The record gives the reactivity of an RNA of 177 nucleotides to 2A3 and DMS. Conditions: 150 mM KOAc, 10 mM MgCl2 and 150 mM bicine (pH 8.5), 24 C. For 2A3 the reverse transcriptase was SuperScript II with manganese.
[RMDB]
RNA sequence: GGGAACGACUCGAGUAGAGUCGAAAACUGCUCUGCAUCCGAAGCUAUCUGCAGUGCCAGCUCACGUGUCGGGGCUAUUAUUAAUGAUCUGGGCUCUGCCAGCUUGCGUUUAUGGGUGUGAGGAAAAGGAUGACACUGAAUUCGUUCAGUGUCAUCCAAAAGAAACAACAACAACAAC
Reactivity to 2A3 in 0.01 (KOAc 150mM, MgCl2 10mM, bicine 150mM(pH8.5), 24C), signal-to-noise 3, nucleotides 027 to 126: c010u020g010c000u020c060u150g000c020a000u000c010c020g040a080a010g000c010u020a040u040c010u030g000c010a010g010u020g000c000c000a000g000c000u010c010a110c060g250u190g110u160c130g010g050g010g060c090u030a100u280u030a050u040u160a170a140u140g060a040u030c040u110g030g070g050c010u030c000u030g040c070c000a010g020c020u000u030g010c010g150u140u120u110a160u180g000g010g000u010g000u030g000a020g010g030a020a140a030a050
Reactivity to DMS in 0.01 (KOAc 150mM, MgCl2 10mM, bicine 150mM(pH8.5), 24C), signal-to-noise 2, nucleotides 027 to 126: c020u000g010c010u000c000u000g080c000a030u000c010c010g020a100a110g000c020u000a050u010c020u000g000c000a000g010u000g020c010c050a060g000c070u000c000a060c130g020u050g010u000c120g010g010g010g000c090u000a050u010u020a130u020u030a090a130u000g000a030u000c090u010g020g020g020c030u000c020u000g000c070c110a030g000c090u000u000g000c020g030u010u010u020a100u010g000g010g030u000g010u020g000a000g000g000a070a020a080a130